[RMDB]
RNA sequence: GGGAACGACUCGAGUAGAGUCGAAAAUCCUAUAGAUGAGAUACCCUAUAAGAGUUUCUCUGAUAGUGGUUGCAUUCUUCCAUCUGAGUGCACUAUGUUUAGGGAUGCAGAGGGCCGUAUGACACCAAACCAAGAGAGUUCGCUCUCUUGAAAAGAAACAACAACAACAAC
Reactivity to 2A3 in 0.01 (KOAc 150mM, MgCl2 10mM, bicine 150mM(pH8.5), 24C), signal-to-noise 9, nucleotides 027 to 129: u020c030c000u070a090u100a080g110a050u090g040a030g020a110u100a090c010c000c020u060a070u040a230a080g090a010g050u030u090u040c020u000c000u010g030a040u050a040g090u080g030g020u100u120g000c010a020u010u020c010u130u100c110c070a210u070c090u100g010a010g020u020g020c010a010c010u020a020u080g080u030u070u070a040g010g020g000a020u050g010c020a010g030a070g110g010g000c010c010g080u100a080u090g030a040c000a020c060c030a070a040a000c030
Reactivity to DMS in 0.01 (KOAc 150mM, MgCl2 10mM, bicine 150mM(pH8.5), 24C), signal-to-noise 9, nucleotides 027 to 129: u020c030c000u000a110u060a110g000a080u020g000a110g000a080u030a040c000c020c010u000a080u050a150a120g000a110g010u020u020u010c000u000c010u000g000a090u030a040g030u010g040g010u010u010g050c050a000u000u000c030u010u000c160c140a090u040c080u000g010a070g050u040g000c040a000c050u030a030u000g020u020u010u010a040g060g040g000a080u040g000c080a030g040a140g020g010g020c060c080g000u040a050u050g020a110c090a110c030c080a040a080a080c200